This 207-nucleotide RNA was probed chemically with 2A3. The reactions ran in a buffer of 150 mM KOAc, 10 mM MgCl2 and 150 mM bicine (pH 8.5), at 24 C. For 2A3 the reverse transcriptase was SuperScript II with manganese. It was measured as part of the RMDB library OK3TST.
[RMDB]
RNA sequence: GGGAACGACUCGAGUAGAGUCGAAAAUCGGGGUGCAUCAUUUGGUAGCGCUUGCGACAGAGGGCGGCCACAUUGGUGAACGAGGUAGAGAUGCAGGAGCUGGGGUGGUUUUUGCGCUUCAAGAGCUCUUGGUAGCGCUCCUGGAUCCGCGAAGCGGGCUACUCCCCUAUUUCGAUAGGGGAGUAGCAAAAGAAACAACAACAACAAC
Reactivity to 2A3 in 0.01 (KOAc 150mM, MgCl2 10mM, bicine 150mM(pH8.5), 24C), signal-to-noise 1, nucleotides 027 to 156: u080c030g000g020g000g010u050g000c020a030u030c040a080u150u050u100g000g060u070a030g060c030g010c030u040u060g020c030g110a110c040a110g030a050g050g030g000c040g000g000c030c010a020c010a070u040u200g060g000u020g070a060a030c050g000a040g020g040u050a020g020a010g000a040u130g070c010a040g000g020a000g000c080u030g040g010g030g010u060g040g000u080u020u020u120u140g010c010g000c060u010u000c010a030a030g060a010g050c030u030c010u180u090g120g030u060a010g000c000g000c010u030c010c000u030g000g060a050u000c030c000g000c010g030a030a000g030c000g100g010